[RMDB]
RNA sequence: GGGAACGACUCGAGUAGAGUCGAAAAGGUUCCAUUCUGUUCAAACCAUUUCACGGAACUGAUCAUGAAGGACGGCAGGACGCUGGUGGUCCCGUGUCGUGGACAAGACGAGUUGAUUGGACGUGCCCGAGAAUGGGAGCUUCGGCUCCCAUUCUCGAAAAGAAACAACAACAACAAC
Reactivity to 2A3 in 0.01 (KOAc 150mM, MgCl2 10mM, bicine 150mM(pH8.5), 24C), signal-to-noise 1, nucleotides 027 to 126: g020g040u110u010c040c000a010u050u060c040u080g040u130u070c030a000a050a070c000c010a020u000u040u040c020a000c030g010g020a040a100c140u100g030a010u110c000a000u030g210a100a090g190g030a020c020g050g010c050a020g000g160a030c040g000c010u010g000g100u000g020g000u040c000c000c000g000u000g000u010c000g000u020g020g040a060c000a020a050g020a000c000g020a000g060u030u120g030a110u000u050g000g000a010c050g060u140g130c000c010
Reactivity to DMS in 0.01 (KOAc 150mM, MgCl2 10mM, bicine 150mM(pH8.5), 24C), signal-to-noise 1, nucleotides 027 to 126: g000g000u050u020c010c010a020u000u000c000u000g020u040u000c050a060a180a210c160c000a080u000u010u000c000a000c060g020g020a250a050c060u000g030a090u020c010a060u010g070a090a000g040g000a240c000g010g000c010a020g000g000a000c120g060c150u000g000g000u050g000g020u000c000c050c050g020u000g020u000c050g070u000g010g000a130c090a130a130g010a080c000g020a100g000u000u100g020a090u000u000g000g000a010c030g000u020g000c000c000